Source: RMDB library OK2TRN, as collected in RNAgym. Chemical mapping of a 177-nucleotide RNA with 2A3 and DMS.
[RMDB]
RNA sequence: GGGAACGACUCGAGUAGAGUCGAAAAGCAGUUCUGCCAACUCAUUGAUGAGGUACCUUGUGAGGCAUGAGCCUGACCCUAUUACUGGAGCAAUCCAUUGGUUGUACCUGAAAGGCAAGCUAGAUCCUCCUUGGACCUUGUUCGCAAGGUCCAAGGAAAAAGAAACAACAACAACAAC
Reactivity to 2A3 in 0.01 (KOAc 150mM, MgCl2 10mM, bicine 150mM(pH8.5), 24C), signal-to-noise 1, nucleotides 027 to 126: g120c030a020g000u070u000c070u020g000c000c000a070a010c090u020c080a200u050u100g090a160u140g020a040g000g000u020a090c010c010u130u100g100u090g210a010g000g010c060a050u220g080a040g060c010c030u030g040a060c000c000c010u020a060u300u260a120c090u010g000g010a000g000c050a010a050u000c010c070a030u020u040g000g000u020u060g000u000a040c000c050u010g030a230a140a000g050g000c010a010a030g000c010u010a010g020a030u000c020c000
Reactivity to DMS in 0.01 (KOAc 150mM, MgCl2 10mM, bicine 150mM(pH8.5), 24C), signal-to-noise 2, nucleotides 027 to 126: g020c120a050g030u000u010c090u030g030c030c020a140a250c090u020c070a050u000u000g000a150u000g020a010g030g010u000a020c010c090u000u020g040u000g000a120g000g020c030a120u000g000a080g010c020c020u000g040a070c020c060c200u000a030u000u000a150c210u000g000g030a100g000c300a100a100u000c000c010a030u040u000g000g010u000u000g000u000a030c030c010u020g000a060a090a210g000g000c030a010a030g020c010u010a100g000a160u000c000c020
For DMS, 980 sequencing reads were counted.